[RMDB]
RNA sequence: GGGAACGACUCGAGUAGAGUCGAAAAAAGUAUUGCUAUAGUUAAGGUUGCGCUUGCCUAUUUAGGCAUACUUGUCAGGAUGGCGCGUUGCAGUCCAACAAGAUCCAGGGACUGUACAGAAUUUUCCAAAACGCGUCGAGGUUCGCCUCGACGCGAAGUCACUUCCUAGGUUCGCCUAGGAAGUGACAAAAGAAACAACAACAACAAC
Reactivity to 2A3 in 0.01 (KOAc 150mM, MgCl2 10mM, bicine 150mM(pH8.5), 24C), signal-to-noise 1, nucleotides 027 to 156: a000a000g060u010a020u090u250g000c060u070a030u130a150g140u160u130a110a010g000g020u060u130g040c000g000c030u060u150g020c000c000u150a170u150u200u120a030g000g050c000a000u030a020c000u040u020g100u170c070a060g090g000a050u070g040g030c020g000c000g110u050u120g000c000a020g000u000c000c000a010a010c010a170a080g080a180u140c070c080a060g040g010g020a020c020u010g000u010a000c010a010g150a060a090u000u150u000u170c060c000a080a050a060a060c000g000c010g000u000c000g020a010g000g080u020u210c270g010c020c000u020c060g000a000c030g000c000g000a000a010
This 207-nucleotide RNA was probed chemically with 2A3.